[RMDB]
Structure probing data (2A3) for a 207-nucleotide construct. For 2A3 the reverse transcriptase was SuperScript II with manganese. It was measured as part of the RMDB library OK3TST. The RNA was probed in 150 mM KOAc, 10 mM MgCl2 and 150 mM bicine (pH 8.5) at 24 C. Values cover nucleotides 27 to 156. As a SHAPE reagent, 2A3 marks flexible, mostly unpaired nucleotides at the ribose 2'-OH. The 2A3 profile rests on 2,599 reads.

RNA sequence: GGGAACGACUCGAGUAGAGUCGAAAACUUCAAGGCAGUAGGAGAUAGAAGAGGAAGUAGGGUGGGUGUUAUGAGCAGCACUGUGGCCUGAGGACAGGGGCAGCCACACGGUGGUCUGCAUCCACCCAGCCAUCAGCAUGGCUCACUGCAUUGCACACAUUUUACGACGAUUCGUCGUCGUAAAAUGAAAAGAAACAACAACAACAAC
Reactivity to 2A3 in 0.01 (KOAc 150mM, MgCl2 10mM, bicine 150mM(pH8.5), 24C), signal-to-noise 3, nucleotides 027 to 156: c000u030u030c010a050a060g050g000c000a010g010u100a030g030g140a030g020a060u060a070g080a080a020g000a030g030g020a110a020g050u140a110g010g040g000u030g000g000g020u020g030u050u200a140u170g040a020g040c040a000g080c010a020c070u030g000u010g020g010c050c040u070g020a180g010g060a070c080a120g020g010g000g000c020a030g010c020c000a020c000a010c050g110g020u010g000g090u020c010u000g000c000a030u000c000c000a010c000c010c000a000g020c010c000a070u100c040a000g080c030a020u070g040g010c010u000c010a030c020u020g000c020a050u040u140g020c060a050c010a000